Chemical mapping of a 170-nucleotide RNA with DMS and 2A3. DMS adducts were read by reverse transcription with MarathonRT. The data come from the RNA Mapping Database (RMDB), library 15KLIB. The RNA was probed in 150 mM KOAc, 10 mM MgCl2 and 150 mM bicine (pH 8.5) at 24 C. The DMS profile rests on 41,808 reads.
[RMDB]
RNA sequence: GGGAACGACUCGAGUAGAGUCGAAAAUGCCGAGGAAGAGCCGGAGGAGGAGAGGCAAGAGAUCCCGAGGGGGCUUCAGGCUAAAGAGUGGACGAUUUUCGGGGAAGGUCUCCCAAGAAGAACCAGGAUACAGAUCUGUUCGCAGAUCUGAAAAGAAACAACAACAACAAC
Reactivity to DMS in 0.01 (KOAc 150mM, MgCl2 10mM, bicine 150mM(pH8.5), 24C), signal-to-noise 7, nucleotides 027 to 129: u050g040c050c000g000a070g050g000a010a070g020a120g010c040c040g020g030a070g000g000a100g020g020a050g000a010g010g030c110a040a060g020a060g000a040u000c010c020c030g020a050g020g010g000g020g050c120u000u030c030a040g030g040c080u000a040a080a110g000a040g030u030g000g000a080c090g040a100u050u010u010u040c100g000g000g020g020a030a030g010g000u020c050u000c000c000c000a050a050g020a050a040g030a000a050c110c030a040g000g010a090u040a100
Reactivity to 2A3 in 0.01 (KOAc 150mM, MgCl2 10mM, bicine 150mM(pH8.5), 24C), signal-to-noise 7, nucleotides 027 to 129: u110g010c010c010g010a020g020g010a050a100g010a020g020c010c010g020g000a020g010g020a000g000g020a030g000a000g000g000c010a030a010g030a000g000a050u040c020c010c000g000a020g000g040g000g000g000c000u040u060c030a030g010g000c000u080a100a060a010g060a010g030u080g020g010a020c020g020a040u020u050u080u100c040g020g000g010g010a010a030g020g030u000c030u000c010c000c010a010a010g030a010a000g010a010a020c030c000a030g050g000a030u060a120